About this RNA:
Chemical mapping of a 177-nucleotide RNA with 2A3 and DMS. For DMS, 2,987 sequencing reads were counted. For DMS the reverse transcriptase was MarathonRT.

RNA sequence: GGGAACGACUCGAGUAGAGUCGAAAAAGAAAAGCGGAGGAGGGUUAUGGAUUGCGCUAAGUCCGCCCGCGCGUGGUGUGGGCUGGAAUUCGUGAAUGGAGGAUAAUUAAUGCCGCCCGCCCAAAAACCCUAAUAUAGGUUUCGACCUAUAUUAGGGAAAAGAAACAACAACAACAAC
Reactivity to 2A3 in 0.01 (KOAc 150mM, MgCl2 10mM, bicine 150mM(pH8.5), 24C), signal-to-noise 2, nucleotides 027 to 126: a000g050a000a050a020a020g040c060g030g040a030g060g030a020g060g010g030u090u110a040u150g030g030a070u070u130g060c020g000c060u040a040a000g040u010c000c000g010c000c000c000g070c000g000c030g070u160g120g020u090g020u030g040g030g000c080u090g050g020a000a020u030u030c040g010u040g080a080a030u090g060g030a030g040g020a020u040a100a050u140u020a080a030u020g020c010c000g020c010c030c010g030c000c020c010a030a090a040a050a080
Reactivity to DMS in 0.01 (KOAc 150mM, MgCl2 10mM, bicine 150mM(pH8.5), 24C), signal-to-noise 3, nucleotides 027 to 126: a100g000a100a090a100a170g020c060g020g020a060g000g010a130g010g000g000u000u000a040u000g010g010a100u000u010g000c040g000c140u010a050a050g020u000c020c020g000c020c000c010g000c050g010c130g010u000g020g000u000g040u000g000g000g010c010u010g020g000a030a030u000u000c080g000u000g000a060a090u000g000g010a100g000g010a050u000a040a060u000u000a060a100u020g000c010c010g000c020c030c080g010c000c000c020a030a060a060a080a060
Source: RMDB library M2PK90, as collected in RNAgym. Values cover nucleotides 27 to 126. High DMS reactivity at an A or C suggests that its Watson-Crick edge is free. Conditions: 150 mM KOAc, 10 mM MgCl2 and 150 mM bicine (pH 8.5), 24 C. For 2A3 the reverse transcriptase was SuperScript II with manganese.